Overview: This 177-nucleotide RNA was probed chemically with DMS. The DMS profile rests on 1,238 reads.
RNA sequence: GGGAACGACUCGAGUAGAGUCGAAAAGGCCGAAUAUAAUCGUCGGUGCCAGACCGAAGAGGUGCUGCCGCCGCGGGAGGAUGUGUUUUCGUGGACUCGUUAUUGCACCCCCGACGAGGUGCGCGUGAGCAUACCACUGCUUCGGCAGUGGUAUGCUAAAAGAAACAACAACAACAAC
Reactivity to DMS in 0.01 (KOAc 150mM, MgCl2 10mM, bicine 150mM(pH8.5), 24C), signal-to-noise 1, nucleotides 027 to 126: g000g040c010c010g000a090a080u010a150u040a080a040u010c100g000u000c030g040g030u010g010c160c030a050g020a090c040c010g000a110a070g020a160g010g030u000g000c030u000g060c060c080g010c040c050g050c030g000g000g020a120g010g010a080u000g020u000g010u000u010u000u000c020g000u020g000g030a070c070u000c030g010u000u000a160u000u020g010c070a160c050c000c030c020c050g000a080c070g000a070g000g010u000g030c050g000c040g010u000g000

Values are in units of 0.01, from 0 to 300, in steps of 10.